[RMDB]
RNA sequence: GGGAACGACUCGAGUAGAGUCGAAAAAAGAAGGCCCACGAACAACUGCGGUUAUAUUGGGAUGGAUUGCGCGUGAUUUUACUCUUUACAAUACAUUCUUUCAUGCUUCCUAGGGAUUGAGCUGCGACCUAAUGGACCGUUUCGACGGUCCAUUAGGAAAAGAAACAACAACAACAAC
Reactivity to DMS in 0.01 (KOAc 150mM, MgCl2 10mM, bicine 150mM(pH8.5), 24C), signal-to-noise 2, nucleotides 027 to 126: a030a060g030a130a120g030g010c000c020c030a100c110g000a120a140c090a050a040c120u000g030c050g030g010u000u000a080u000a100u010u020g000g000g000a030u000g000g000a050u000u010g020c100g010c190g000u010g010a070u010u010u000u000a140c150u000c050u000u010u010a080c120a020a040u000a050c040a060u020u000c020u000u010u000c090a050u010g010c060u020u000c020c010u000a080g020g000g000a110u030u030g020a120g030c060u000g000c110g000a130
Reactivity to 2A3 in 0.01 (KOAc 150mM, MgCl2 10mM, bicine 150mM(pH8.5), 24C), signal-to-noise 1, nucleotides 027 to 126: a030a000g120a010a010g060g010c010c010c000a010c010g070a060a030c060a000a030c020u060g030c030g080g060u120u040a090u030a040u190u100g090g000g030a010u020g040g000a010u010u100g000c020g060c040g020u020g070a060u030u100u040u060a090c060u050c000u060u150u080a060c060a050a050u040a090c010a040u040u050c000u030u070u080c060a050u100g020c020u020u040c010c010u010a080g090g000g020a080u040u120g040a000g030c020u020g000c070g020a030

Structure probing data (DMS and 2A3) for a 177-nucleotide construct.
For DMS the reverse transcriptase was MarathonRT.
The data come from the RNA Mapping Database (RMDB), library OK2TST.
In probing experiments dimethyl sulfate is read out at A N1 and C N3, which are open when not base-paired.
The RNA was probed in 150 mM KOAc, 10 mM MgCl2 and 150 mM bicine (pH 8.5) at 24 C.